Source information:
The data come from the RNA Mapping Database (RMDB), library TTRDES. An RNA of 177 nucleotides, treated with 2A3 and DMS and read out base by base. For DMS, 13,464 sequencing reads were counted. For 2A3, 31,144 sequencing reads were counted. The RNA was probed in 150 mM KOAc, 10 mM MgCl2 and 150 mM bicine (pH 8.5) at 24 C.
RNA sequence: GGGAACGACUCGAGUAGAGUCGAAAAGAUAUGGAUGUGUUAGAGCUUUUGACGAGGUGUACUCGGAAACGAGUACUUCUCGAUAAGCUCGACACAUCCUAAGUCAAAAGUCGCGUUCGCGCGACAACUAUGAGUGAAAGUUCGCUUUCACUCAUAGAAAAGAAACAACAACAACAAC
Reactivity to 2A3 in 0.01 (KOAc 150mM, MgCl2 10mM, bicine 150mM(pH8.5), 24C), signal-to-noise 8, nucleotides 027 to 126: g030a010u060a040u160g010g000a010u010g030u010g080u090u110a300g000a010g000c030u100u160u210u300g300a190c040g000a000g010g000u030g010u010a000c000u000c000g020g020a060a060a020c000g000a000g000u000a000c000u060u020c000u000c010g000a010u030a050a000g000c000u000c000g000a000c000a000c000a000u000c000c000u000a010a010g010u000c020a040a020a080a170g020u010c000g000c000g040u060u110c300g010c000g000c000g160a000c000a000a000
Reactivity to DMS in 0.01 (KOAc 150mM, MgCl2 10mM, bicine 150mM(pH8.5), 24C), signal-to-noise 7, nucleotides 027 to 126: g010a030u010a300u010g000g000a010u000g010u000g000u000u000a090g030a010g020c000u000u000u000u000g020a220c120g010a010g000g000u000g020u010a000c000u000c010g000g010a070a100a230c010g020a010g020u000a000c010u000u000c000u000c000g010a100u000a020a020g000c000u000c000g010a000c000a000c000a000u000c000c000u000a010a090g000u010c050a110a110a130a160g000u000c010g010c000g020u000u010c240g010c010g020c000g000a000c000a040a120